[RMDB]
RNA sequence: GGGAACGACUCGAGUAGAGUCGAAAAGUCUCCUGGACGCUUCCGCCCGCUCGGGAUGGGCCUCAGUGCCGACGAGGAGUCCGCAGGUGGGAGGAUCAGCCACCGGAGAGGGACGCGAUGGUAAGAGCUUAAAUUCAACGUUCGCGUUGAAUUUAAGAAAAGAAACAACAACAACAAC
Reactivity to DMS in 0.01 (KOAc 150mM, MgCl2 10mM, bicine 150mM(pH8.5), 24C), signal-to-noise 3, nucleotides 027 to 126: g010u000c020u000c010c020u000g020g030a110c180g020c030u010u000c010c020g000c020c010c010g020c020u000c090g020g000g000a060u000g000g000g020c010c000u010c070a140g030u010g030c070c080g030a120c100g010a080g000g020a270g010u010c000c020g010c100a160g010g010u000g020g010g020a070g000g020a040u000c130a140g020c020c120a190c020c010g020g000a060g010a090g010g010g010a060c030g020c080g000a080u010g000g010u000a080a120g010a130g000
Reactivity to 2A3 in 0.01 (KOAc 150mM, MgCl2 10mM, bicine 150mM(pH8.5), 24C), signal-to-noise 1, nucleotides 027 to 126: g040u040c000u040c010c030u040g040g010a050c050g000c020u030u030c030c000g000c020c000c000g020c040u040c060g000g000g110a070u040g050g130g150c000c000u050c050a130g050u110g180c020c000g100a080c050g050a040g050g000a030g040u010c000c030g080c040a030g070g020u060g010g010g000a030g010g000a080u130c060a010g020c000c040a020c000c030g010g000a040g000a050g030g020g000a030c030g030c040g060a030u090g090g030u100a060a060g010a030g130
This 177-nucleotide RNA was probed chemically with DMS and 2A3. For 2A3 the reverse transcriptase was SuperScript II with manganese. The 2A3 profile rests on 1,525 reads. The DMS profile rests on 1,797 reads.